The record gives the reactivity of an RNA of 207 nucleotides to 2A3 and DMS. For DMS, 3,778 sequencing reads were counted. Reactivities are rounded to 0.1 and cut off at 0 and 3. The RNA was probed in 150 mM KOAc, 10 mM MgCl2 and 150 mM bicine (pH 8.5) at 24 C.

RNA sequence: GGGAACGACUCGAGUAGAGUCGAAAAGGGGUCUGUAGUGGUUUCAGACAUGCUCCUACCUGAAGCCUCCACGGGUAGAGAGCAACAGCUGAAACGUAACAUCUACAGACGGAGGCACCCAAAGCUCAACAAGAUAGUUCGCUAUCUUGUUGAGCAAGCCUUAUGCAUAGUUCGCUAUGCAUAAGGCAAAAGAAACAACAACAACAAC
Reactivity to 2A3 in 0.01 (KOAc 150mM, MgCl2 10mM, bicine 150mM(pH8.5), 24C), signal-to-noise 5, nucleotides 027 to 156: g130g010g040g000u000c010u000g000u000a010g000u000g090g040u010u010u000c070a110g080a210c100a170u030g000c000u000c000c000u000a000c000c000u010g020a120a030g000c010c000u000c010c010a020c000g010g000g000u040a040g080a010g000a000g130c010a020a020c110a040g040c000u000g000a000a000a000c000g000u010a020a010c020a160u100c010u010a000c000a010g000a000c000g000g000a000g000g000c000a030c000c010c000a080a050a010g010c000u000c000a010a000c000a000a000g000a000u010a000g020u080u060c280g000c160u000a000u000c000u000u000g000u000u000g000a000g000c000a000a000
Reactivity to DMS in 0.01 (KOAc 150mM, MgCl2 10mM, bicine 150mM(pH8.5), 24C), signal-to-noise 2, nucleotides 027 to 156: g000g010g040g020u000c000u000g000u000a000g000u000g030g010u000u010u010c000a050g020a130c050a210u000g020c000u000c000c000u030a040c020c000u000g000a060a110g000c000c000u010c010c010a300c020g010g010g010u010a020g010a220g040a030g010c000a050a070c140a130g000c040u000g000a040a020a030c020g000u000a080a090c130a060u000c020u000a010c000a010g010a010c020g010g030a020g100g040c030a150c030c020c030a100a120a120g010c000u000c000a010a010c000a030a000g030a030u000a020g030u000u010c300g040c000u010a000u000c000u010u000g000u000u010g000a010g040c010a000a040